[RMDB]
RNA sequence: GGGAACGACUCGAGUAGAGUCGAAAACCUGGCCAAAAGUAUAUUUACAAAGUAGCUAGGCAGUUCAACGCUCGCUAAGAUGUGGGUUGACCAUUAAUGGUCGGCUUAAGGUACGGGCUACGCCACCCGAGAGGGUGCAACUACCUACCGGGCGCACCCGGGGAGGAAUGUUCGCAUUCCUCCCCGGAAAAGAAACAACAACAACAAC
Reactivity to 2A3 in 0.01 (KOAc 150mM, MgCl2 10mM, bicine 150mM(pH8.5), 24C), signal-to-noise 1, nucleotides 027 to 156: c010c000u000g030g010c010c000a030a050a080a050g030u090a120u040a150u300u270u080a100c010a060a110a000g060u030a020g020c020u020a040g000g000c020a040g020u000u210c070a130a020c040g020c000u040c000g000c010u090a060a060g030a140u240g030u080g060g020g030u010u050g000a020c010c010a060u210u280a190a240u210g000g000u000c000g000g000c030u060u060a060a040g000g020u000a030c050g040g030g000c050u060a040c060g040c040c000a000c010c000c000g020a020g020a000g000g020g020u010g030c000a020a010c010u020a040c010c000u010a020c000c000g010g010g000c000g000c040a060c010